[RMDB]
RNA sequence: GGGAACGACUCGAGUAGAGUCGAAAAUUAAAACAGAUUGUCUGGUAUUCUGGAACGAUUUUCAGUGUGUCUGUAAACACCACCGUCUUUAUUGCAGCCAUUUCAGACUCGGAACAGUUGGGGAAUAGUGUUUAUGCUAAUGAGGCAGAGCUGCAGAGUCCACACUAGUUUUCGAACUAGUGUGGACAAAAGAAACAACAACAACAAC
Reactivity to 2A3 in 0.01 (KOAc 150mM, MgCl2 10mM, bicine 150mM(pH8.5), 24C), signal-to-noise 1, nucleotides 027 to 156: u130u020a040a000a010a010c030a030g010a090u110u150g040u130c020u010g050g050u030a060u130u000c000u080g030g070a030a050c050g030a110u030u210u000u120c080a040g000u010g000u010g050u050c010u070g150u150a100a020a000c030a040c050c000a040c010c010g110u000c140u110u080u040a080u190u130g010c000a020g000c000c000a070u010u040u070c010a010g010a060c020u010c020g060g050a000a070c010a080g050u140u150g060g000g000g010a030a110u080a070g050u030g040u030u090u040a030u140g040c030u100a020a080u060g010a000g000g000c030a010g040a010g000c000u000g000c000a010g010a050